This 177-nucleotide RNA was probed chemically with 2A3 and DMS. For 2A3 the reverse transcriptase was SuperScript II with manganese. The data come from the RNA Mapping Database (RMDB), libraries RFM100 and RFMREP.
RNA sequence: GGGAACGACUCGAGUAGAGUCGAAAACGUUUAUUCGGUUGAUAACGAAACACCGUCCUGCUCAGCGAUAACGUCCUGCAUGCCUGGCGUAUGCUCAUCGUAAACUGCGUGGUCAGAUAGUUGACGAUUCUUCACCUUUCUUCGGAAAGGUGAAGAAAAAAGAAACAACAACAACAAC
Reactivity to 2A3 in 0.01 (KOAc 150mM, MgCl2 10mM, bicine 150mM(pH8.5), 24C), signal-to-noise 2, nucleotides 027 to 126: c030g000u000u090u180a100u020u110c050g040g100u030u070g030a050u040a000a040c010g070a150a090a000c150a020c030c070g050u010c000c000u020g040c000u000c020a020g020c030g130a050u070a130a020c040g040u030c000c000u020g000c020a040u030g060c020c040u030g060g010c010g020u000a020u100g000c000u030c130a110u100c060g060u050a000a090a040c010u000g000c020g100u000g060g020u020c000a000g040a050u120a050g080u000u020g030a040c000g000a050
Reactivity to DMS in 0.01 (KOAc 150mM, MgCl2 10mM, bicine 150mM(pH8.5), 24C), signal-to-noise 2, nucleotides 027 to 126: c050g000u040u030u040a080u040u010c060g000g050u000u000g000a030u000a030a050c000g010a100a060a190c170a030c130c020g000u000c000c000u000g030c010u020c020a050g000c110g020a160u000a050a050c100g000u000c030c020u030g000c010a130u000g000c030c050u000g000g000c000g000u020a060u020g030c070u000c070a060u010c040g000u000a030a080a040c060u010g000c030g040u000g000g020u010c070a100g010a100u020a040g020u010u000g000a060c030g000a120